[RMDB]
RNA sequence: GGGAACGACUCGAGUAGAGUCGAAAACUAAACUCGCCUGGAAGCUGUGGUUACAUUAGCCAAAGGGUUUCGCAUCGAAUGCGACUUACCCCGCAGAUCCAAUACCAUAAGCGUGCACAACCGCCACUCACUGGUCCCUAUUCGUAGGGACCAGUGAAAAAGAAACAACAACAACAAC
Reactivity to 2A3 in 0.01 (KOAc 150mM, MgCl2 10mM, bicine 150mM(pH8.5), 24C), signal-to-noise 5, nucleotides 027 to 126: c020u050a100a000a030c020u020c050g020c020c010u030g030g020a080a040g040c000u020g030u080g110g030u080u100a040c040a140u150u160a040g000c040c050a080a050a060g040g000g000u010u040u030c010g000c010a030u030c120g180a250a080u050g000c000g010a030c020u080u120a060c000c000c000c000g080c010a010g000a060u000c040c010a040a050u120a190c020c030a050u070a080a050g030c020g040u060g030c080a010c000a090a060c060c010g030c040c000a030c030
Reactivity to DMS in 0.01 (KOAc 150mM, MgCl2 10mM, bicine 150mM(pH8.5), 24C), signal-to-noise 2, nucleotides 027 to 126: c080u000a100a020a050c020u020c090g030c000c000u000g010g000a060a180g010c000u040g000u000g000g000u010u100a110c140a060u020u000a020g020c000c010a190a230a170g010g000g000u000u010u000c000g070c010a010u000c190g000a120a300u000g010c020g000a120c280u010u000a030c020c000c000c040g010c100a070g000a060u070c030c110a100a020u000a080c030c010a010u020a050a120g010c000g000u000g000c090a040c100a020a030c050c000g070c040c080a000c170
Source information: Chemical mapping of a 177-nucleotide RNA with 2A3 and DMS. High 2A3 reactivity points to a flexible backbone, as in loops and unpaired stretches. Conditions: 150 mM KOAc, 10 mM MgCl2 and 150 mM bicine (pH 8.5), 24 C. It was measured as part of the RMDB library OK1LIB. Values cover nucleotides 27 to 126.